[RMDB]
An RNA of 177 nucleotides, treated with 2A3 and DMS and read out base by base. DMS adducts were read by reverse transcription with MarathonRT. Source: RMDB library OK1LIB, as collected in RNAgym. The reactions ran in a buffer of 150 mM KOAc, 10 mM MgCl2 and 150 mM bicine (pH 8.5), at 24 C. In probing experiments dimethyl sulfate is read out at A N1 and C N3, which are open when not base-paired. The 2A3 profile rests on 2,518 reads.
RNA sequence: GGGAACGACUCGAGUAGAGUCGAAAAUAAAAGCACCCAAACUCGACUUUUCGGUUUGGACGGUGGCGUCGGUACGCAAGAGGAGAACACUGAGAGACACACCACUGAAGAUGUGUCCACCGACAUGGCCUACACACCUAUUCGUAGGUGUGUAGGCAAAAGAAACAACAACAACAAC
Reactivity to 2A3 in 0.01 (KOAc 150mM, MgCl2 10mM, bicine 150mM(pH8.5), 24C), signal-to-noise 4, nucleotides 027 to 126: u210a000a100a010a010g080c010a020c000c020c010a020a000a000c230u280c100g030a050c080u120u090u230u110c040g020g000u000u000u020g040g040a050c100g040g050u050g020g000c020g020u010c040g020g020u090a060c090g030c130a110a050g040a060g110g100a160g030a150a030c120a010c060u030g030a000g000a000g010a060c000a000c000a010c030c030a120c170u150g050a060a040g080a170u040g000u000g000u000c000c010a000c000c000g050a050c050a120u100g070
Reactivity to DMS in 0.01 (KOAc 150mM, MgCl2 10mM, bicine 150mM(pH8.5), 24C), signal-to-noise 3, nucleotides 027 to 126: u060a110a120a110a150g000c100a060c140c020c000a000a000a000c040u060c110g050a080c300u020u020u020u020c010g050g000u000u000u000g000g000a060c130g000g000u000g010g000c060g000u000c000g000g000u020a120c140g080c050a060a140g030a140g020g010a100g000a110a020c080a060c040u010g010a150g000a230g020a020c020a010c000a020c020c060a050c230u030g000a070a060g020a090u000g020u000g000u000c000c060a060c010c020g000a030c080a140u100g000